[RMDB]
RNA sequence: GGGAACGACUCGAGUAGAGUCGAAAAGGAAGAUAGCCAGCGUUUGUUUUAUUUGGUAUGUUACUACUGCUGCAAGCUAUAUCAUAAGACACACGCGGCUAUUUUCCAAAAUCAGGGUUCGCCCUGACUAAAUCUUCAUGUUCGCAUGAAGAUUUAGAAAAGAAACAACAACAACAAC
Reactivity to 2A3 in 0.01 (KOAc 150mM, MgCl2 10mM, bicine 150mM(pH8.5), 24C), signal-to-noise 1, nucleotides 027 to 126: g000g010a000a020g000a020u000a000g010c040c080a050g020c010g000u000u000u000g000u000u040u020u020a120u070u090u070g020g000u020a000u020g110u130u040a080c080u030a050c060u090g130c040u040g110c070a050a040g020c030u080a020u010a000u010c000a000u000a010a000g000a000c000a000c000a000c010g000c000g020g010c000u000a000u010u000u000u000c000c000a010a000a000a000u010c010a000g000g000g040u030u050c110g050c020c010c000u000g020a000
Reactivity to DMS in 0.01 (KOAc 150mM, MgCl2 10mM, bicine 150mM(pH8.5), 24C), signal-to-noise 2, nucleotides 027 to 126: g010g010a030a020g000a000u000a000g010c010c010a130g040c000g010u000u000u000g000u000u000u000u000a030u000u010u010g000g000u000a000u000g010u000u000a110c100u000a100c130u010g020c130u000g000c080a100a060g010c070u000a010u000a010u010c010a020u010a010a010g000a010c000a010c040a020c000g040c000g010g000c000u010a000u000u000u000u000c000c000a040a040a090a140u000c000a010g000g010g020u000u010c300g000c000c000c000u010g000a040

The record gives the reactivity of an RNA of 177 nucleotides to 2A3 and DMS. Source: RMDB library RFMREP, as collected in RNAgym. For DMS, 3,080 sequencing reads were counted. Values are in units of 0.01, from 0 to 300, in steps of 10. For 2A3 the reverse transcriptase was SuperScript II with manganese.